RNA sequence: GGGAACGACUCGAGUAGAGUCGAAAACAGGAAACUGGUUAAUCGUUUUCCUUGGUAGUAUAGCGGAAACCAUAAAUAAGAAGAACUCUAAGUGCUUGAGUAGAGUUAACAUAAUUAGACAGGCAAUUAAGGUACUCCACGUUCGCGUGGAGUACAACCAUGGGCGAUGGUUCGCCAUCGCCCAUGGAAAAGAAACAACAACAACAAC
Reactivity to 2A3 in 0.01 (KOAc 150mM, MgCl2 10mM, bicine 150mM(pH8.5), 24C), signal-to-noise 1, nucleotides 027 to 156: c040a000g070g070a060a040a080c110u190g010g020u100u090a150a060u110c020g000u140u000u020u050c070c030u040u040g060g000u020a090g000u040a060u020a120g080c050g020g040a000a140a020c000c010a040u160a240a060a030u240a120a010g030a030a010g020a030a000c000u000c000u020a080a000g040u040g140c030u060u060g000a000g000u010a000g000a000g000u000u070a030a000c020a010u170a220a020u130u000a000g010a040c020a000g000g080c030a010a010u150u160a130a000g070g000u000a030c000u000c000c000a000c000g000u000u030c260g000c000g050u000g000g000a000g020u010a010c000a000a000